[RMDB]
The record gives the reactivity of an RNA of 207 nucleotides to DMS and 2A3. 2A3 adducts were read by reverse transcription with SuperScript II with manganese. For DMS the reverse transcriptase was MarathonRT.

RNA sequence: GGGAACGACUCGAGUAGAGUCGAAAAGAUAAUCGGUCCCAUGUUUUCAGGUAAAAGUACAGAAUUGAUUAGACGAGUUAGACGUUAUCAAAUAGCUCAAUAUAAAUGCGUGACUAUAAAAUAUUCUAACGAUAAUAGAUACGGAACGGGACUAUGGCUUUACAAUUAUUUUCGAAUAAUUGUAAAGAAAAGAAACAACAACAACAAC
Reactivity to DMS in 0.01 (KOAc 150mM, MgCl2 10mM, bicine 150mM(pH8.5), 24C), signal-to-noise 4, nucleotides 027 to 156: g020a130u000a080a090u000c050g030g000u000c000c000c010a160u010g010u010u000u000u000c040a100g020g020u000a050a080a090a130g010u010a200c070a160g020a090a150u000u000g010a120u000u000a080g010a140c080g010a170g020u010u000a030g020a050c300g010u000u000a040u000c030a090a150a110u000a030g000c030u000c010a060a120u000a230u000a070a110a160u010g020c120g020u000g020a050c020u010a030u000a060a080a040a030u000a090u000u000c020u000a020a050c020g010a120u010a070a080u000a080g010a140u010a100c060g000g010a050a040c050g000g010g010a030c030u000a040u000g010g000
Reactivity to 2A3 in 0.01 (KOAc 150mM, MgCl2 10mM, bicine 150mM(pH8.5), 24C), signal-to-noise 4, nucleotides 027 to 156: g040a110u190a100a060u170c070g030g000u000c000c010c000a030u080g030u000u070u030u050c050a040g030g050u060a030a080a070a060g080u070a100c040a050g060a100a080u060u040g000a020u050u140a060g040a050c020g000a030g070u000u010a000g000a010c010g010u000u060a010u030c040a020a060a040u040a010g000c030u020c050a090a020u160a060u090a170a170a070u160g060c040g040u020g030a050c010u010a000u070a120a100a050a070u110a050u040u020c000u010a010a010c000g020a000u060a120a070u100a140g080a010u090a100c040g020g000a020a010c010g000g000g010a010c020u050a120u090g040g000
Values cover nucleotides 27 to 156.